Source: RMDB library OK3TST, as collected in RNAgym.
The record gives the reactivity of an RNA of 207 nucleotides to DMS and 2A3.
For DMS, 5,493 sequencing reads were counted.
The 2A3 profile rests on 3,335 reads.

[RMDB]
RNA sequence: GGGAACGACUCGAGUAGAGUCGAAAAGGGAGCCCGGCCUGGCUGAGACCCUGAGGGAUGCUGCGCACCUCGGCCUGCUUGAGUGCCAGUUUCAGUUCCGGCAUGAGCGCUGGAACUGUAGCCUGGAGGGCAGGAUGGGCCUGCUCAAGAGAGGUGAGAUUAAAAUUACUUUCGAGUAAUUUUAAUCAAAAGAAACAACAACAACAAC
Reactivity to DMS in 0.01 (KOAc 150mM, MgCl2 10mM, bicine 150mM(pH8.5), 24C), signal-to-noise 2, nucleotides 027 to 156: g010g030g010a110g030c000c020c050g000g010c040c000u010g010g060c010u000g000a110g000a140c000c010c030u010g010a200g040g020g000a120u010g010c030u000g020c070g020c040a070c020c010u000c010g010g010c010c000u010g020c010u000u000g010a090g020u000g020c000c020a030g050u010u010u000c000a030g000u000u000c000c020g020g010c000a200u000g010a180g020c210g010c010u000g000g010a000a010c010u000g000u010a040g000c070c020u010g020g010a210g010g010g010c000a040g000g010a090u000g020g030g010c000c030u010g000c030u010c030a080a130g000a140g010a060g000g000u010g000a300
Reactivity to 2A3 in 0.01 (KOAc 150mM, MgCl2 10mM, bicine 150mM(pH8.5), 24C), signal-to-noise 3, nucleotides 027 to 156: g040g020g010a020g020c010c050c050g010g020c020c030u030g000g030c020u060g030a030g040a160c010c010c030u060g020a090g010g040g020a080u120g010c040u040g010c040g000c040a020c020c030u000c000g050g050c030c010u070g030c020u060u140g060a060g070u080g050c000c000a010g010u000u050u050c000a010g000u000u010c000c000g010g000c050a080u240g160a120g150c150g000c050u000g000g000a000a000c000u000g000u010a010g030c000c020u020g010g040a040g020g010g000c010a010g000g020a070u070g010g000g020c000c010u010g000c000u020c050a060a020g070a010g010a030g020g050u060g030a050